[RMDB]
RNA sequence: GGGAACGACUCGAGUAGAGUCGAAAAUCGAUGGCGAUCUCCACGCCGGCCCGCGAGCUGACCGCGGAGAGUUGAACCAGGGUGGCGCCGCCGUGCUUGACCGCGUUGGCGAUGGCGUUGUCGACGGCGGCUUUAGCCCGUUCGCGGGCUAAAGCCGAAAAGAAACAACAACAACAAC
Reactivity to DMS in 0.01 (KOAc 150mM, MgCl2 10mM, bicine 150mM(pH8.5), 24C), signal-to-noise 1, nucleotides 027 to 126: u000c090g010a180u000g000g010c000g020a040u000c000u000c020c020a300c020g030c030c010g000g000c050c000c000g000c100g000a070g020c010u000g000a040c140c060g070c110g000g000a050g010a020g000u000u000g010a080a150c110c110a110g050g000g040u000g000g010c230g010c020c020g000c000c000g010u000g030c070u020u010g000a040c040c070g000c030g000u000u020g000g000c170g010a070u000g010g020c040g020u000u000g010u000c010g000a080c030g000g010

Notes
Chemical mapping of a 177-nucleotide RNA with DMS. For DMS, 1,124 sequencing reads were counted. Reactivities are given for positions 27 through 126. Conditions: 150 mM KOAc, 10 mM MgCl2 and 150 mM bicine (pH 8.5), 24 C. It was measured as part of the RMDB library OK2TRN.